[RMDB]
Structure probing data (2A3 and DMS) for a 177-nucleotide construct.
For 2A3, 4,060 sequencing reads were counted.
2A3 adducts were read by reverse transcription with SuperScript II with manganese.
RNA sequence: GGGAACGACUCGAGUAGAGUCGAAAACAGGGUCUGGAGUGGACCUCUAGCAAACUCCAACAGACCUGCAGCUGAGGGUCCUGUCUGUUAGAAGGAAAACUAACAAACAGAAAGGACGUCCACACCAGUGACUGAUGUUAUUCGUAACAUCAGUCACAAAAGAAACAACAACAACAAC
Reactivity to 2A3 in 0.01 (KOAc 150mM, MgCl2 10mM, bicine 150mM(pH8.5), 24C), signal-to-noise 3, nucleotides 027 to 126: c010a020g050g000g040u010c010u020g020g030a060g050u020g020g020a050c000c030u030c050u060a020g020c020a070a040a070c030u000c030c030a050a060c030a050g030a010c000c000u030g020c030a050g000c050u070g020a080g040g070g000u000c020c000u010g020u030c010u000g010u010u030a070g040a150a110g180g120a120a130a050a070c010u030a000a040c020a050a040a000c000a010g010a060a060a010g010g000a010c010g090u000c030c000a050c000a020c020c000a020
Reactivity to DMS in 0.01 (KOAc 150mM, MgCl2 10mM, bicine 150mM(pH8.5), 24C), signal-to-noise 3, nucleotides 027 to 126: c080a140g010g040g030u000c030u010g020g020a130g040u000g040g010a150c200c070u010c080u040a080g000c110a130a110a060c060u000c010c030a100a150c180a090g000a050c020c000u000g010c130a100g020c040u000g000a110g000g010g000u000c060c010u000g010u000c020u000g000u000u000a010g010a140a140g000g000a040a050a100a080c010u000a000a050c040a020a020a020c000a030g000a040a090a080g010g010a030c120g000u000c000c000a060c050a150c050c060a060